[RMDB]
RNA sequence: GGGAACGACUCGAGUAGAGUCGAAAAGAUAUGGAGCGGAACUUCAUCGAUCACCAGGAACUACUCGGAAACGAGCCUGGUGGGAGAAGUAUGCGCUCCUAAGUCAAAAGCUAGGUUCGCCUAGCAACGAGUUAAUAUUCUUCGGAAUAUUAACUCGAAAAGAAACAACAACAACAAC
Reactivity to 2A3 in 0.01 (KOAc 150mM, MgCl2 10mM, bicine 150mM(pH8.5), 24C), signal-to-noise 7, nucleotides 027 to 126: g020a010u060a030u140g010g000a000g000c010g060g140a020a020c010u030u010c020a280u300c060g090a080u060c010a000c010c000a000g020g020a080a080c090u300a100c030u300c010g030g040a050a050a040c000g000a010g010c000c000u000g000g000u000g000g020g000a030g010a010a000g020u050a230u300g230c000g010c000u000c000c000u010a040a010g010u000c020a060a060a070a070g000c000u010a010g020g050u080u100c300g090c040c000u000a000g000c000a000a010
Reactivity to DMS in 0.01 (KOAc 150mM, MgCl2 10mM, bicine 150mM(pH8.5), 24C), signal-to-noise 5, nucleotides 027 to 126: g010a040u000a300u000g000g010a000g020c010g010g010a050a050c000u000u000c010a300u000c160g000a110u010c000a000c000c000a000g000g000a130a050c100u020a290c020u000c020g000g000a110a050a110c010g000a010g000c020c000u000g000g010u000g000g000g000a020g010a010a010g020u000a030u010g000c000g000c010u000c000c000u000a010a060g020u010c020a100a080a100a140g000c000u000a000g000g010u000u010c260g010c010c000u000a010g000c000a040a040
The record gives the reactivity of an RNA of 177 nucleotides to 2A3 and DMS.
In probing experiments dimethyl sulfate is read out at A N1 and C N3, which are open when not base-paired.
It was measured as part of the RMDB library TTRDEL.
Values cover nucleotides 27 to 126.
The RNA was probed in 150 mM KOAc, 10 mM MgCl2 and 150 mM bicine (pH 8.5) at 24 C.